[RMDB]
This 207-nucleotide RNA was probed chemically with DMS and 2A3. The RNA was probed in 150 mM KOAc, 10 mM MgCl2 and 150 mM bicine (pH 8.5) at 24 C. The 2A3 profile rests on 1,596 reads. It was measured as part of the RMDB library OK3TST.
RNA sequence: GGGAACGACUCGAGUAGAGUCGAAAAAAGCCUUCUGGGAAGAAGCAUUUCUGUGCAGUAUCACAGGUGAACACACCGGCUCUUCUUCCACGCAGGGAGAUGCGUGCUUUCUUGUACCUCUUGUCAAAGCUGUGGCUUCCAGAAGAGGCUGGAAAGAGUACCUCAUUACUUUCGAGUAAUGAGGUACAAAAGAAACAACAACAACAAC
Reactivity to DMS in 0.01 (KOAc 150mM, MgCl2 10mM, bicine 150mM(pH8.5), 24C), signal-to-noise 1, nucleotides 027 to 156: a090a090g010c040c000u000u010c030u000g000g020g010a040a020g000a050a070g010c060a110u000u020u000c040u000g010u000g040c110a210g020u000a170u000c030a050c060a100g040g000u000g000a090a120c070a060c050a100c030c020g000g000c080u000c010u010u010c010u000u010c020c030a060c080g030c060a110g010g010g010a070g000a030u000g030c050g020u000g030c020u000u000u010c060u000u010g010u000a000c010c030u000c000u000u000g000u000c090a030a030a130g020c020u000g070u030g050g000c030u000u000c010c030a290g000a040a080g010a030g010g030c010u000g000g000a000a060a070g000a300
Reactivity to 2A3 in 0.01 (KOAc 150mM, MgCl2 10mM, bicine 150mM(pH8.5), 24C), signal-to-noise 3, nucleotides 027 to 156: a020a000g060c020c000u050u030c040u070g030g000g000a050a050g000a060a000g000c030a060u080u160u070c060u030g030u030g010c090a110g070u190a120u300c030a010c000a040g040g050u080g140a200a010c110a010c030a040c120c050g100g000c020u040c010u020u010c000u030u020c000c020a030c040g030c030a040g050g030g050a110g010a030u080g040c000g050u030g010c000u070u010u020c030u030u030g040u080a120c000c000u010c000u020u060g120u120c060a070a030a040g000c050u090g090u170g200g000c020u090u010c050c020a010g010a050a000g010a030g030g010c010u010g010g020a080a030a000g060a010